[RMDB]
An RNA of 177 nucleotides, treated with 2A3 and DMS and read out base by base. High 2A3 reactivity points to a flexible backbone, as in loops and unpaired stretches. The reactions ran in a buffer of 150 mM KOAc, 10 mM MgCl2 and 150 mM bicine (pH 8.5), at 24 C. It was measured as part of the RMDB library OK2TRN. 2A3 adducts were read by reverse transcription with SuperScript II with manganese.

RNA sequence: GGGAACGACUCGAGUAGAGUCGAAAAAUUUCCACAGUACUUGUACUAGGCAAAUCCACUGACUAGACGUGAGGGAACAUUUUAAAGGAAAAUCCUGGGAUUUAGAAGUCGGGGCAUGGGGUAGGGACUCCCUAUGCCUAUUCGUAGGCAUAGGGAGAAAAGAAACAACAACAACAAC
Reactivity to 2A3 in 0.01 (KOAc 150mM, MgCl2 10mM, bicine 150mM(pH8.5), 24C), signal-to-noise 1, nucleotides 027 to 126: a020u040u020u060c030c010a080c000a030g070u080a040c020u030u090g040u110a130c010u020a020g050g030c040a070a030a120u060c080c000a070c070u020g020a030c020u020a020g030a070c070g060u060g040a040g000g040g060a060a070c020a020u070u150u080u200a220a110a030g070g000a100a140a010a120u020c010c030u030g010g020g000a050u020u080u120a070g000a200a010g090u160c080g000g020g020g020c120a070u060g000g000g000g000u100a050g020g050g000a040
Reactivity to DMS in 0.01 (KOAc 150mM, MgCl2 10mM, bicine 150mM(pH8.5), 24C), signal-to-noise 2, nucleotides 027 to 126: a140u000u000u000c000c000a220c110a100g020u000a100c050u010u000g020u000a090c040u000a080g000g030c090a020a130a090u020c100c120a090c080u000g020a050c040u000a020g020a060c050g010u000g020a090g000g010g010a100a060c140a040u010u010u010u000a020a070a150g000g000a110a110a050a100u010c030c020u010g000g000g000a200u000u010u010a070g000a120a100g010u000c060g020g010g000g060c090a020u000g000g000g000g000u000a110g020g000g010a120